Annotation
Source: RMDB library M2RFOK, as collected in RNAgym. Structure probing data (2A3 and DMS) for a 207-nucleotide construct. DMS adducts were read by reverse transcription with MarathonRT. The reactions ran in a buffer of 150 mM KOAc, 10 mM MgCl2 and 150 mM bicine (pH 8.5), at 24 C. For 2A3 the reverse transcriptase was SuperScript II with manganese.

RNA sequence: GGGAACGACUCGAGUAGAGUCGAAAAUGGGCUACCAGUAAGCGAAAAAUGAUACAGGACGAAAAAAACAUAAUUCGAGAUUUUUCAGGAUGGAUUUUCUUAGGUAUCUAUCAAAACUAUUCUGAUGCAACGUAGAGCACGUUCGCGUGCUCUACAACUUCAAUUGUGUGUUCGCACACAAUUGAAGAAAAGAAACAACAACAACAAC
Reactivity to 2A3 in 0.01 (KOAc 150mM, MgCl2 10mM, bicine 150mM(pH8.5), 24C), signal-to-noise 4, nucleotides 027 to 156: u050g030g050g010c030u040a060c020c000a050g040u100a050a020g030c040g060a090a020a010a020a040u100g020a020u060a070c050a060g040g040a030c060g050a060a000a010a020a010a060a010c050a050u140a080a090u090u090c040g010a020g040a220u090u090u030u180u070c010a010g040g010a010u010g060g030a080u010u050u010u000c000u050u060a020g080g010u120a100u160c010u010a010u040c020a010a020a020a010c010u020a020u040u020c000u020g010a030u050g050c040a070a030c070g000u000a000g000a000g000c000a000c000g000u020u040c120g010c010g050u000g000c000u000c000u000a000c000a000a000
Reactivity to DMS in 0.01 (KOAc 150mM, MgCl2 10mM, bicine 150mM(pH8.5), 24C), signal-to-noise 1, nucleotides 027 to 156: u000g000g000g000c030u000a090c040c000a150g010u000a060a060g060c000g000a000a120a070a090a120u000g000a150u010a120c040a050g000g020a070c050g020a010a000a050a090a030a100a100c010a090u000a050a150u000u010c010g020a190g000a140u010u000u010u010u000c010a030g080g000a020u020g020g010a170u010u000u020u000c030u000u020a000g040g000u000a080u010c000u010a010u000c030a030a020a020a030c010u000a010u000u010c000u000g010a060u000g000c090a060a100c120g000u010a010g010a030g010c010a010c010g030u000u030c300g000c030g050u000g010c000u000c000u010a000c000a000a040